[RMDB]
RNA sequence: GGGAACGACUCGAGUAGAGUCGAAAACUUGCGUGCAUGCUGCCUUCCGCAAAGCUGCAGCGCGGCGCUCUGGAGGCCUUGCCCCGCGCACUGCUCUUUACAUGGCCCGACGUGAGGGCACUUCGCGUCCGACGUGCCCUUUCGAGGGCACGUCGGAAAAAGAAACAACAACAACAAC
Reactivity to 2A3 in 0.01 (KOAc 150mM, MgCl2 10mM, bicine 150mM(pH8.5), 24C), signal-to-noise 1, nucleotides 027 to 126: c020u050u050g080c040g040u040g000c060a020u010g010c080u050g000c000c030u060u000c060c000g060c110a020a020a070g020c050u090g000c010a040g030c030g000c010g040g000c080g010c030u030c020u050g140g070a110g020g000c000c010u020u030g020c000c000c000c000g000c010g010c020a020c020u020g010c000u010c000u080u150u030a100c030a100u140g100g020c030c010c000g040a130c000g000u050g020a020g000g020g020c010a010c020u020u020c010g030c080g020